[RMDB]
RNA sequence: GGGAACGACUCGAGUAGAGUCGAAAAUGCACCGUGUAUUUGUAUUAGUUCCAUGUAUUAAAACAUCAUUAAUUGUUUUCCACUUACGAGCGCACGUCCACACACACUUCUUAUUUUUUAACAGGAACCAUGCGGCACCAUUCGUGGUGCCGCAUGGAAAAGAAACAACAACAACAAC
Reactivity to 2A3 in 0.01 (KOAc 150mM, MgCl2 10mM, bicine 150mM(pH8.5), 24C), signal-to-noise 1, nucleotides 027 to 126: u180g010c110a070c150c000g000u090g000u070a200u000u090u020g090u060a110u160u000a000g000u030u140c010c000a050u000g270u060a270u040u230a160a100a200a120c210a050u160c000a060u000u090a220a050u250u000g090u040u000u000u000c000c000a020c070u000u010a050c000g060a000g000c000g040c050a040c000g000u000c070c000a060c000a000c000a000c000a000c030u000u000c000u050u150a300u280u000u000u000u080u110a020a060c000a040g040g040a000a000
An RNA of 177 nucleotides, treated with 2A3 and read out base by base. For 2A3 the reverse transcriptase was SuperScript II with manganese. The reactions ran in a buffer of 150 mM KOAc, 10 mM MgCl2 and 150 mM bicine (pH 8.5), at 24 C. The data come from the RNA Mapping Database (RMDB), library OK1LIB.